This 177-nucleotide RNA was probed chemically with DMS and 2A3. Reactivities are rounded to 0.1 and cut off at 0 and 3. The data come from the RNA Mapping Database (RMDB), library OK2TRN.
RNA sequence: GGGAACGACUCGAGUAGAGUCGAAAAACAUCAACGCGGAAUUGACCUCGGGAGGCAACACCAGAAAACUCAUCACGCCAUCCCUUCCGCAGCUGGACGUGCCCGGGCCAUCCCCUCCCGUGACCACCUACGCAAAGCAGUUCGCUGCUUUGCGUAGAAAAGAAACAACAACAACAAC
Reactivity to DMS in 0.01 (KOAc 150mM, MgCl2 10mM, bicine 150mM(pH8.5), 24C), signal-to-noise 1, nucleotides 027 to 126: a050c080a100u010c070a080a070c100g020c030g000g000a080a030u010u010g010a040c120c050u000c080g000g020g060a240g000g060c030a070a070c100a120c070c070a180g000a150a060a080a070c110u000c030a020u000c030a080c120g000c070c010a130u000c020c010c030u000u000c030c030g020c030a110g000c030u000g020g060a100c100g000u000g000c010c020c010g040g020g030c040c020a070u010c030c000c020c040u000c020c010c010g010u000g020a130c050c010a080c230
Reactivity to 2A3 in 0.01 (KOAc 150mM, MgCl2 10mM, bicine 150mM(pH8.5), 24C), signal-to-noise 1, nucleotides 027 to 126: a000c040a070u120c100a050a000c110g020c010g040g000a060a040u070u140g050a140c000c060u100c090g010g000g000a010g000g030c070a000a090c020a010c170c060a070g170a110a150a010a040c130u150c070a120u090c070a050c140g080c010c000a190u030c000c000c040u000u010c000c060g020c030a000g000c010u050g030g000a060c010g110u030g070c000c000c050g030g000g030c020c020a100u120c000c000c000c000u000c000c000c010g000u000g010a010c000c000a000c020